[RMDB]
RNA sequence: GGGAACGACUCGAGUAGAGUCGAAAAGAUAUGGAUGCAUAAGCUUUUGACGAAGCUCGGAAACGAGACUUCGAUAAGCUUGAUGCAUCCUAAGUCAAACAAUAAACGUGUUCGCACGUUUAUUGAAUCGAUCAGUCAUCUUCGGAUGACUGAUCGAAAAAGAAACAACAACAACAAC
Reactivity to DMS in 0.01 (KOAc 150mM, MgCl2 10mM, bicine 150mM(pH8.5), 24C), signal-to-noise 1, nucleotides 027 to 126: g020a020u000a300u010g010g010a000u000g000c000a030u000a030a010g000c000u000u000u020u010g040a160c160g010a010a000g010c000u000c000g000g010a120a150a270c010g010a010g000a130c000u000u000c000g010a120u010a010a070g010c000u010u000g000a010u000g000c000a000u010c000c000u000a000a020g000u000c020a130a180a290c000a000a040u000a010a000a020c000g000u000g000u000u020c170g050c010a000c000g010u000u000u000a000u000u000g000a150a040
Reactivity to 2A3 in 0.01 (KOAc 150mM, MgCl2 10mM, bicine 150mM(pH8.5), 24C), signal-to-noise 1, nucleotides 027 to 126: g020a010u050a010u090g000g000a010u000g000c000a020u040a020a020g000c030u010u140u230u300g110a050c000g000a000a010g000c010u000c000g050g040a040a030a000c000g010a000g140a290c000u000u000c000g000a000u020a070a000g010c000u010u020g130a000u010g010c020a000u000c000c000u000a030a000g030u000c030a150a000a030c030a010a000u000a000a010a000c020g060u040g010u100u110c300g100c160a000c020g040u060u030u010a000u040u000g040a010a150